[RMDB]
RNA sequence: GGGAACGACUCGAGUAGAGUCGAAAAUGGGGCGUGGCCAAGUGGUAAGGCAGCGGGUUUUGGUCCCGUUACUCGGAGGUUCGAAUCCUUCCGUCCCAGAAAACGCCAUGUGCUUCGGCACAUGGCGGUGAUAAUUCUGGUUCGCCAGAAUUAUCACAAAAGAAACAACAACAACAAC
Reactivity to 2A3 in 0.01 (KOAc 150mM, MgCl2 10mM, bicine 150mM(pH8.5), 24C), signal-to-noise 3, nucleotides 027 to 126: u020g000g020g000g000c010g000u020g020g020c010c010a030a020g060u080g170g300u130a030a040g010g000c010a000g000c020g000g040g020u040u190u190u260g150g060u150c000c000c000g020u050u060a040c090u020c030g020g000a000g000g000u000u010c010g010a010a010u000c000c000u010u000c010c000g000u020c010c000c000a010g000a000a050a000a000c030g000c000c000a000u000g000u000g000c010u040u050c200g080g000c020a010c000a000u000g010g010c000g000
Reactivity to DMS in 0.01 (KOAc 150mM, MgCl2 10mM, bicine 150mM(pH8.5), 24C), signal-to-noise 5, nucleotides 027 to 126: u000g010g010g010g030c020g010u000g000g040c000c020a060a120g000u010g010g020u030a040a300g000g010c010a180g000c010g000g010g010u000u010u010u020g030g020u010c010c010c000g000u010u000a030c180u000c010g000g000a020g000g000u010u010c020g000a300a030u000c010c000u000u000c020c010g010u000c000c000c000a070g000a030a050a050a300c020g010c010c000a010u000g010u000g000c000u000u010c110g010g000c010a010c000a010u000g000g000c000g000